This 207-nucleotide RNA was probed chemically with 2A3. Reactivities are given for positions 27 through 156. Source: RMDB library M2RFPK, as collected in RNAgym. For 2A3, 753 sequencing reads were counted.
RNA sequence: GGGAACGACUCGAGUAGAGUCGAAAAUGACGUUAAACUGCUGACUCAUACAUACUGACACCGGUUGCUCAACCGGCUGUGUGGGACAAUAGAAUAACAAGGCUGUCAAUUUGAGCUUGACGGCUGCAAAACCUGCAGUACUUCGGUACUGCAGGAAGCACAUUACCACGUUCGCGUGGUAAUGUGCAAAAGAAACAACAACAACAAC
Reactivity to 2A3 in 0.01 (KOAc 150mM, MgCl2 10mM, bicine 150mM(pH8.5), 24C), signal-to-noise 1, nucleotides 027 to 156: u120g070a040c100g000u060u020a040a070a020c000u030g040c050u010g010a050c000u020c010a000u040a010c000a000u240a090c090u200g120a030c060a000c020c020g000g000u020u070g090c070u020c050a010a010c030c000g000g000c020u010g000u000g000u000g000g010g050a010c020a010a020u030a050g000a100a000u000a050a010c070a040a090g060g000c000u000g010u000c000a000a000u100u070u170g020a010g030c000u000u000g000a000c000g020g000c000u040g000c030a000a000a000a140c010c000u000g020c010a000g000u000a000c010u020u140c100g110g010u000a030c000u000g000c000a000g000g010a000a000